[RMDB]
Conditions: 150 mM KOAc, 10 mM MgCl2 and 150 mM bicine (pH 8.5), 24 C.
Structure probing data (DMS and 2A3) for a 177-nucleotide construct.
2A3 adducts were read by reverse transcription with SuperScript II with manganese.
For DMS the reverse transcriptase was MarathonRT.
It was measured as part of the RMDB library OK1LIB.
The DMS profile rests on 1,214 reads.

RNA sequence: GGGAACGACUCGAGUAGAGUCGAAAAGCGCAAUUGCCGAAGAAGGCGCUAAUAUCAGCAGCGUAUCAGAUACUGGAUCAGCCUAUGUCUGUUAUAUUUCUAAUGCAGAAGGUACUAAUGUAGGUUAAUCACCAUGACGGUUCGCCGUCAUGGUGAUAAAAGAAACAACAACAACAAC
Reactivity to DMS in 0.01 (KOAc 150mM, MgCl2 10mM, bicine 150mM(pH8.5), 24C), signal-to-noise 1, nucleotides 027 to 126: g000c010g020c050a070a070u020u040g000c060c040g000a010a100g000a160a070g080g000c010g000c100u020a090a060u050a070u010c100a010g010c000a040g000c030g000u000a020u000c070a070g010a160u000a100c040u000g010g030a050u040c130a040g020c040c000u050a120u000g000u000c060u000g000u000u030a150u090a000u040u000u050c030u000a030a040u050g030c220a080g040a070a160g010g050u000a010c010u040a000a050u040g070u000a000g000g040u000u000a160
Reactivity to 2A3 in 0.01 (KOAc 150mM, MgCl2 10mM, bicine 150mM(pH8.5), 24C), signal-to-noise 3, nucleotides 027 to 126: g060c000g000c000a050a070u160u150g020c110c090g100a130a160g090a090a010g100g010c000g000c000u040a000a090u250a130u300c130a020g190c050a000g000c000g070u120a050u060c010a050g090a090u040a060c100u090g070g060a040u090c070a060g040c020c000u030a030u090g000u040c020u010g040u070u040a040u000a060u050u110u010c040u140a170a090u220g000c000a000g020a050a010g010g060u060a110c010u110a120a020u160g000u000a020g060g000u000u080a070